[RMDB]
An RNA of 177 nucleotides, treated with DMS and 2A3 and read out base by base. High DMS reactivity at an A or C suggests that its Watson-Crick edge is free. 2A3 adducts were read by reverse transcription with SuperScript II with manganese. It was measured as part of the RMDB library OK2TST. For DMS, 891 sequencing reads were counted.
RNA sequence: GGGAACGACUCGAGUAGAGUCGAAAACAUGUCGUUUUACGGUAACAAAUGGCACGAAUCAAGAUGAACAUGCAAUUAAAUACUUUGGGCACUGUAUUGACCAAACAGCUUUAUCUCCAAAAGUUAACGCGUGUAUACGAUUCGUCGUAUACACGCGAAAAGAAACAACAACAACAAC
Reactivity to DMS in 0.01 (KOAc 150mM, MgCl2 10mM, bicine 150mM(pH8.5), 24C), signal-to-noise 2, nucleotides 027 to 126: c050a090u000g060u000c050g010u000u000u000u000a100c060g000g000u020a100a070c200a010a060a070u020g010g000c030a010c060g000a080a090u000c040a060a070g000a080u010g000a070a040c100a050u000g020c040a040a040u040u000a060a130a100u010a000c050u000u000u010g040g000g010c100a060c050u000g020u010a100u020u040g020a050c050c050a080a020a100c060a020g000c110u000u000u000a100u010c050u020c010c060a040a030a070a080g010u000u010a050a150
Reactivity to 2A3 in 0.01 (KOAc 150mM, MgCl2 10mM, bicine 150mM(pH8.5), 24C), signal-to-noise 2, nucleotides 027 to 126: c030a030u050g010u050c010g010u040u030u040u150a100c080g070g070u080a110a030c060a040a180a120u140g080g010c070a020c020g050a060a040u070c050a030a030g030a150u070g080a080a010c010a030u040g030c020a020a080u060u130a110a080a040u200a050c000u020u040u020g030g000g050c040a010c050u020g040u050a080u120u070g020a040c050c000a060a080a010c010a010g000c020u190u210u070a150u100c100u000c000c000a030a140a000a020g050u100u090a120a040